[RMDB]
RNA sequence: GGGAACGACUCGAGUAGAGUCGAAAACAGAACUGCACCAUUCAGCUGAAAGCCAGACGUAACAGCACCACGGUGGUGGUGAACACGGUGGGCUCAGAGAAUCCGGAUGAAGCCGGGCGUUACAGCAUCAUCCUCGGUGAUUCGUCACCGAGGAUGAAAAAGAAACAACAACAACAAC
Reactivity to 2A3 in 0.01 (KOAc 150mM, MgCl2 10mM, bicine 150mM(pH8.5), 24C), signal-to-noise 1, nucleotides 027 to 126: c040a040g110a080a080c010u060g060c040a030c030c000a040u030u140c030a050g020c000u050g050a110a120a000g010c000c040a010g040a210c000g020u010a050a100c020a110g080c030a000c010c000a030c030g130g090u290g140g000u010g030g000u040g010a020a040c040a010c040g030g000u060g010g030g000c030u040c000a040g040a000g030a090a030u090c040c020g030g020a030u070g100a000a010g100c020c020g020g050g000c070g020u040u070a060c010a030g000c000a030
Reactivity to DMS in 0.01 (KOAc 150mM, MgCl2 10mM, bicine 150mM(pH8.5), 24C), signal-to-noise 2, nucleotides 027 to 126: c040a100g010a040a120c070u010g020c070a030c040c070a120u010u000c070a160g000c010u010g010a040a110a080g000c000c000a040g010a100c060g010u000a070a070c190a090g020c010a040c010c010a020c010g020g020u010g040g000u020g010g030u000g030a030a160c190a080c020g000g010u030g020g010g000c020u000c040a030g000a130g000a060a070u010c040c040g000g000a100u000g000a150a100g000c000c030g020g000g010c010g000u000u010a030c050a100g020c110a200
Source information: The record gives the reactivity of an RNA of 177 nucleotides to 2A3 and DMS. Source: RMDB library OK2TRN, as collected in RNAgym. Values cover nucleotides 27 to 126. The reactions ran in a buffer of 150 mM KOAc, 10 mM MgCl2 and 150 mM bicine (pH 8.5), at 24 C.